[RMDB]
RNA sequence: GGGAACGACUCGAGUAGAGUCGAAAAGUGUUUGUCCAGGCAUGGGCAGCUGAUUUCACUGAAUUCAGAAAGGGCAUACUUUCGUUAUGCAGUCAAGUAUCCUGUCCAAUUAAUGACCUACUAAGCAGACGUUAACCUCUUUCGAGAGGUUAACGUCAAAAGAAACAACAACAACAAC
Reactivity to DMS in 0.01 (KOAc 150mM, MgCl2 10mM, bicine 150mM(pH8.5), 24C), signal-to-noise 2, nucleotides 027 to 126: g050u000g020u000u000u000g010u000c110c060a060g020g010c130a070u000g020g000g000c000a040g000c160u010g020a070u000u000u000c160a060c040u010g000a030a020u000u000c080a110g010a010a060a110g010g000g070c210a060u010a100c030u000u000u000c100g010u000u000a000u020g000c040a040g000u010c160a050a100g000u000a060u000c170c010u030g020u000c020c010a110a060u000u020a100a060u010g000a100c010c020u040a070c090u010a080a130g050c220a100
Reactivity to 2A3 in 0.01 (KOAc 150mM, MgCl2 10mM, bicine 150mM(pH8.5), 24C), signal-to-noise 1, nucleotides 027 to 126: g020u070g030u010u100u060g040u050c000c000a040g050g000c050a040u020g020g000g000c010a000g070c050u040g070a110u050u000u090c050a060c100u050g040a030a060u130u050c000a100g050a040a040a060g000g050g050c050a120u190a190c010u080u110u030c000g060u000u010a030u160g000c020a020g030u040c060a070a010g060u010a040u040c010c010u090g020u000c010c010a000a000u060u080a080a090u070g090a080c010c030u000a030c070u000a070a000g030c040a010